[RMDB]
RNA sequence: GGGAACGACUCGAGUAGAGUCGAAAACAAUUUGUAAAUGCUGUACAGGGAAGUGUUUAGUGUUCAGAGGAAGAGCUGUACUGUAUUAUCCUGGCUUCAAGCACAAGACUAAUCUCAUGAAUCUGAGAUUCUUCACAAAUGUACAUAUUAGAAGUCACGCACCCAGUGACUUCGGUCACUGGGUGCGAAAAGAAACAACAACAACAAC
Reactivity to 2A3 in 0.01 (KOAc 150mM, MgCl2 10mM, bicine 150mM(pH8.5), 24C), signal-to-noise 3, nucleotides 027 to 156: c020a040a070u050u110u240g060u140a100a080a060u140g000c020u030g030u020a020c020a050g070g020g010a100a070g050u040g110u130u210u090a080g000u040g080u140u070c030a030g000a030g060g020a040a010g000a000g000c030u050g000u120a060c040u050g000u030a100u050u110a080u060c050c020u000g010g000c000u020u150c000a040a030g150c150a040c030a120a000g130a020c000u040a030a010u000c000u000c000a030u090g240a230a160u080c080u000g010a000g000a010u030u020c020u030u080c060a040c020a160a100a120u030g120u160a090c050a050u190a090u050u140a050g000a000a000g010u000c010a000